[RMDB]
RNA sequence: GGGAACGACUCGAGUAGAGUCGAAAAUUAGCUUAAUCCAGGCACCAGGUGCCAGGACGAGACAUCACUCGGAAGCUGUUGCUCCGAAGCAUUCCGGUUCAGUGGUGCAGUUACAUCGGGGAUAGUCAGAAGUGGCCUUGCGCUUCUGAUGAAACUUCCCUUGUGUAUAGUUCGCUAUACACAAGGGAAAAGAAACAACAACAACAAC
Reactivity to 2A3 in 0.01 (KOAc 150mM, MgCl2 10mM, bicine 150mM(pH8.5), 24C), signal-to-noise 2, nucleotides 027 to 156: u100u030a050g050c020u060u190a000a050u060c020c020a050g010g000c020a010c110c200a180g260g000u000g020c000c020a020g030g000a010c010g000a010g030a050c010a020u010c010a040c140u280c000g020g010a000a000g000c000u010g010u050u110g010c000u000c020c000g000a000a000g000c040a160u010u020c010c000g000g050u220u280c050a010g000u010g000g000u010g040c030a030g040u090u160a100c080a090u020c010g000g030g000g000a020u020a020g010u000c010a010g000a030a000g010u040g100g040c040c060u100u220g030c020g000c000u010u000c000u000g000a000u010g000a000a020a000c000u020u000

The data come from the RNA Mapping Database (RMDB), library RSTRND.
The record gives the reactivity of an RNA of 207 nucleotides to 2A3.
The reactions ran in a buffer of 150 mM KOAc, 10 mM MgCl2 and 150 mM bicine (pH 8.5), at 24 C.